[RMDB]
RNA sequence: GGGAACGACUCGAGUAGAGUCGAAAAGAUAUGGAUAACGAACGCGCAUCUAAAUGAUGACCUCGGAAACGAGCAAGUUUAGAAUGCUAAGCGUUAUCCUAAGUCAAAAGAGAGCUUCGGCUCUCAAGAACAGUAUAGCGUUCGCGCUAUACUGUUCAAAAGAAACAACAACAACAAC
Reactivity to DMS in 0.01 (KOAc 150mM, MgCl2 10mM, bicine 150mM(pH8.5), 24C), signal-to-noise 4, nucleotides 027 to 126: g010a020u000a300u000g000g010a010u010a000a010c000g000a020a060c120g010c270g000c010a030u010c000u000a000a010a010u000g000a110u010g010a080c300c000u000c000g010g000a130a100a200c010g010a040g010c010a060a100g020u000u010u010a000g000a060a040u000g010c010u010a150a120g000c010g000u010u000a010u000c010c000u000a030a050g000u000c020a060a090a090a150g000a020g000a010g010c010u010u000c200g020g010c000u000c000u010c000a020a020
Reactivity to 2A3 in 0.01 (KOAc 150mM, MgCl2 10mM, bicine 150mM(pH8.5), 24C), signal-to-noise 4, nucleotides 027 to 126: g040a000u070a020u160g010g000a010u000a010a000c020g010a090a050c070g050c020g000c110a010u000c010u000a000a030a010u090g200a140u100g050a070c030c010u000c000g030g060a040a080a020c000g000a000g000c030a100a020g000u010u010u000a080g020a300a090u020g000c010u050a110a000g040c010g000u010u000a000u000c000c000u000a070a020g040u010c020a010a020a170a090g020a000g010a000g000c020u100u080c290g180g000c010u030c010u000c010a000a010